[RMDB]
RNA sequence: GGGAACGACUCGAGUAGAGUCGAAAAGAAAGAAAGAAAGAAAGGUAUGAAGUCCUAUUCACGCGUGAUAGGAUAAACUUCAUAUUGAUCGUGUAUGUGCUAACGCACAUACACGAAUGCGCAUGCAGAACUGCAUGCAUGAACAUAGUGCGUGCAACAUCCACUCCAUAUUCGUAUGGAGUGGAUGAAAAGAAACAACAACAACAAC
Reactivity to DMS in 0.01 (KOAc 150mM, MgCl2 10mM, bicine 150mM(pH8.5), 24C), signal-to-noise 2, nucleotides 027 to 156: g010a120a080a080g000a130a020a070g010a090a110a180g020a080a170a240g000g010u000a040u000g000a050a070g050u000c000c000u000a040u000u000c000a140c120g010c120g000u010g010a010u000a010g010g050a060u020a050a100a100c010u000u000c000a000u000a010u000u010g010a090u020c010g010u030g010u000a000u000g000u000g000c000u020a080a160c300g010c000a000c010a010u010a000c010a000c000g000a040a010u000g010c050g020c000a090u000g000c010a030g010a110a090c150u000g000c050a040u000g000c000a020u010g000a070a110c190a130u000a060g010u000g040c020g000u000g000c000a110a170
Reactivity to 2A3 in 0.01 (KOAc 150mM, MgCl2 10mM, bicine 150mM(pH8.5), 24C), signal-to-noise 5, nucleotides 027 to 156: g040a010a040a010g090a050a050a000g080a040a100a000g090a090a090a020g040g010u030a010u000g010a000a000g000u000c000c000u000a010u020u080c080a040c070g090c060g050u080g020a000u010a000g020g000a020u110a090a090a010c010u000u000c000a000u000a000u040u070g050a050u030c000g000u000g000u000a000u000g010u000g010c070u190a190a040c120g000c000a000c000a000u000a000c000a000c000g000a000a010u020g000c040g000c010a020u060g000c020a010g060a280a040c140u030g000c000a000u000g000c000a010u090g040a050a040c070a060u140a050g050u020g020c010g000u020g010c020a050a040

Background:
The record gives the reactivity of an RNA of 207 nucleotides to DMS and 2A3. It was measured as part of the RMDB library OK3TST. 2A3 adducts were read by reverse transcription with SuperScript II with manganese. DMS adducts were read by reverse transcription with MarathonRT. The RNA was probed in 150 mM KOAc, 10 mM MgCl2 and 150 mM bicine (pH 8.5) at 24 C.